[RMDB]
RNA sequence: GGGAACGACUCGAGUAGAGUCGAAAAUAGCUUUUCGAAGCUAGGCUCUUCCUAAGUCCCAAGACAUGGACUACCGAGAGAGGUAUCGGAAACGAUACUACCCACCUCUCGGAGUCCAACAGCUUGGGAUAUGGAUCAUAAAUCUGUUCGCAGAUAAAUUUUAGAAGUGUUUCGACACUUCUAAAAUAAAAGAAACAACAACAACAAC
Reactivity to DMS in 0.01 (KOAc 150mM, MgCl2 10mM, bicine 150mM(pH8.5), 24C), signal-to-noise 2, nucleotides 027 to 156: u000a010g000c000u010u000u010u000c240g040a050a000g040c010u000a000g010g020c070u000c040u010u000c000c020u010a120a300g000u000c000c020c010a040a030g020a040c030a300u000g000g000a010c000u000a160c000c020g010a040g000a010g020a250g050g000u000a020u000c000g040g010a170a140a260c000g010a040u000a010c000u000a030c040c020c030a300c140c000u000c000u000c000g030g010a030g020u000c000c020a010a020c100a170g010c010u000u000g000g010g030a020u000a020u000g000g010a020u000c050a130u000a080a140a030u000c020u010g010u000u010c130g040c040a030g000a050u000a050a130
Reactivity to 2A3 in 0.01 (KOAc 150mM, MgCl2 10mM, bicine 150mM(pH8.5), 24C), signal-to-noise 4, nucleotides 027 to 156: u040a010g000c020u080u080u070u100c260g090a030a010g000c000u010a020g070g020c030u020c030u120u060c020c010u010a080a050g020u000c000c000c000a010a000g010a090c040a130u080g000g010a000c010u260a300c040c000g010a000g000a000g000a010g030g000u000a000u010c010g010g030a110a060a030c010g000a000u000a010c000u040a060c040c050c030a060c010c000u000c000u000c010g000g000a000g000u000c000c000a000a000c000a010g020c000u010u000g000g010g000a000u000a010u000g000g010a020u090c050a080u190a200a270a080u060c010u040g060u120u160c260g060c150a010g020a090u130a100a190